[RMDB]
The data come from the RNA Mapping Database (RMDB), library RFMREP.
This 177-nucleotide RNA was probed chemically with 2A3 and DMS.
Reactivities are given for positions 27 through 126.
For DMS the reverse transcriptase was MarathonRT.
For 2A3 the reverse transcriptase was SuperScript II with manganese.

RNA sequence: GGGAACGACUCGAGUAGAGUCGAAAAAGAAUGUUGCUCAAAUGAGUGGCUAACACCACAAAGGGGCGCACAUAAACUGCCUACGGCAUGAGUAGCAGCGCCAUGUGAAAAUGUCGGAAAGCUAGGCGAUACAAUUUAACUUCGGUUAAAUUGUAUCAAAAGAAACAACAACAACAAC
Reactivity to 2A3 in 0.01 (KOAc 150mM, MgCl2 10mM, bicine 150mM(pH8.5), 24C), signal-to-noise 4, nucleotides 027 to 126: a000g140a050a060u050g000u090u250g020c000u010c010a120a170a200u060g010a050g010u000g010g000c020u040a030a010c010a020c040c000a000c000a000a020a010g000g010g010g000c020g010c030a010c000a040u200a040a160a030c040u060g000c000c000u010a030c000g000g000c000a000u000g000a000g000u010a000g020c010a010g010c030g130c060c060a100u020g000u000g000a030a000a000a000u010g000u010c000g020g020a090a010a000g060c060u080a040g030g030c050
Reactivity to DMS in 0.01 (KOAc 150mM, MgCl2 10mM, bicine 150mM(pH8.5), 24C), signal-to-noise 7, nucleotides 027 to 126: a080g020a160a070u010g010u000u000g020c010u000c010a040a100a090u000g000a300g000u000g010g010c020u010a140a080c170a230c000c000a010c010a010a150a070g000g000g000g010c030g010c100a010c080a040u010a050a080a080c070u000g020c010c010u000a190c020g010g000c020a000u000g010a020g020u000a100g010c000a030g010c190g020c210c220a060u000g010u000g000a110a100a120a000u000g010u000c010g010g000a070a130a090g010c150u000a040g010g010c140